[RMDB]
RNA sequence: GGGAACGACUCGAGUAGAGUCGAAAAUGCGCGACAACGGGGUGGAUGUGGUGACUUUGGGGCAGUACAUGCGUCCAACCAAGCGCCACAUGGCUGUGGCCGAGUAUGUGACGCCAGAGGCAUUCGCCUCAGGUGCCAACUUCGGUUGGCACCUGAGAAAAGAAACAACAACAACAAC
Reactivity to 2A3 in 0.01 (KOAc 150mM, MgCl2 10mM, bicine 150mM(pH8.5), 24C), signal-to-noise 2, nucleotides 027 to 126: u070g010c010g000c040g040a090c030a120a040c040g000g050g000g030u090g040g050a090u070g050u050g050g100u050g050a130c050u040u050u130g020g000g010g000c020a040g050u120a040c050a100u140g020c030g020u060c010c030a020a020c010c010a050a020g030c040g000c090c020a000c020a030u140g180g000c090u050g030u070g100g020c010c000g040a060g040u120a110u140g070u130g050a020c000g000c040c040a030g000a060g000g060c050a080u100u090c080g010c020
Reactivity to DMS in 0.01 (KOAc 150mM, MgCl2 10mM, bicine 150mM(pH8.5), 24C), signal-to-noise 2, nucleotides 027 to 126: u010g000c060g030c030g020a070c100a060a110c130g000g020g000g050u000g020g010a080u000g020u000g040g000u000g010a070c070u010u010u000g000g000g000g050c120a090g010u000a060c120a130u010g000c060g020u010c020c040a060a100c060c070a100a060g010c130g000c000c000a010c030a070u010g040g010c190u010g020u020g010g030c010c020g010a060g010u020a070u010g050u020g000a030c060g010c020c090a050g010a030g010g030c020a170u000u010c120g010c070

An RNA of 177 nucleotides, treated with 2A3 and DMS and read out base by base. 2A3 adducts were read by reverse transcription with SuperScript II with manganese. The RNA was probed in 150 mM KOAc, 10 mM MgCl2 and 150 mM bicine (pH 8.5) at 24 C. The DMS profile rests on 1,601 reads.